[RMDB]
RNA sequence: GGGAACGACUCGAGUAGAGUCGAAAAGAUAUGGACGAUACUACCCACCCUGGAGUACGGGCGUUGAAAAGGCGAUUCGGAAACGAAUCGCCUUGGAGCCUGAAACAGGAGGUAUCGUCCUAAGUCACAAUCAUCUAAGGUUCGCCUUAGAUGAUUGAAAAGAAACAACAACAACAAC
Reactivity to 2A3 in 0.01 (KOAc 150mM, MgCl2 10mM, bicine 150mM(pH8.5), 24C), signal-to-noise 1, nucleotides 027 to 126: g140a120u270a160u300g000g000a000c000g010a010u000a000c020u140a200c050c040c010a040c000c000c000u000g080g020a060g040u100a190c240g000g000g000c060g250u300u090g000a010a020a000a000g000g000c000g010a000u000u030c040g050g010a050a080a040c010g000a010a020u000c000g000c010c000u000u000g000g000a000g000c000c000u000g000a010a000a020c000a000g030g000a000g000g000u000a000u000c020g000u000c000c010u000a000a020g080u060c030a040
Reactivity to DMS in 0.01 (KOAc 150mM, MgCl2 10mM, bicine 150mM(pH8.5), 24C), signal-to-noise 3, nucleotides 027 to 126: g000a110u000a090u010g010g000a010c000g010a020u010a000c010u000a170c040c050c080a300c100c000c010u000g010g010a080g040u000a120c190g010g020g000c010g010u000u030g000a190a110a010a010g010g020c000g010a000u010u010c000g000g000a070a070a170c000g000a020a030u000c000g040c000c000u000u000g000g000a080g010c000c010u010g000a070a140a140c010a020g020g010a060g010g000u000a000u000c000g000u000c000c000u000a030a090g000u020c110a230